[RMDB]
The record gives the reactivity of an RNA of 177 nucleotides to 2A3 and DMS. The reactions ran in a buffer of 150 mM KOAc, 10 mM MgCl2 and 150 mM bicine (pH 8.5), at 24 C. DMS (dimethyl sulfate) methylates the pairing face of unpaired adenines and cytosines.
RNA sequence: GGGAACGACUCGAGUAGAGUCGAAAACAGGGACACAGAGCACCCCACCGAUCACCUUCGACGCCAACACCGUGCUACCGUCCAAGGUCCCCUAUGCCAGCCCCGCCGUACGCCUGCUUGCACGCCACCAAAAUGGUGGUUUCGACCACCAUUUUGGAAAAGAAACAACAACAACAAC
Reactivity to 2A3 in 0.01 (KOAc 150mM, MgCl2 10mM, bicine 150mM(pH8.5), 24C), signal-to-noise 3, nucleotides 027 to 126: c030a020g060g040g030a030c010a000c010a130g080a040g030c010a070c010c010c000c000a020c020c030g010a070u060c010a050c000c000u070u070c050g050a070c020g020c050c000a060a020c030a030c060c050g050u050g050c010u070a060c010c000g030u040c010c030a020a020g030g020u040c000c000c000c000u050a060u140g030c010c000a030g010c010c010c000c000g010c000c010g010u030a020c020g020c010c010u050g010c030u020u060g010c000a020c010g010c010c000a050
Reactivity to DMS in 0.01 (KOAc 150mM, MgCl2 10mM, bicine 150mM(pH8.5), 24C), signal-to-noise 2, nucleotides 027 to 126: c040a160g000g030g000a120c090a070c040a080g000a130g030c080a050c040c010c020c020a110c090c060g000a090u010c110a050c060c040u000u000c110g010a060c090g030c020c050a100a120c040a140c050c070g020u000g000c030u010a090c100c010g010u000c000c070a060a040g010g000u000c010c010c000c060u000a120u000g000c000c050a090g000c020c030c030c060g040c040c010g020u050a110c090g010c000c000u050g010c020u020u010g000c000a040c090g030c020c020a160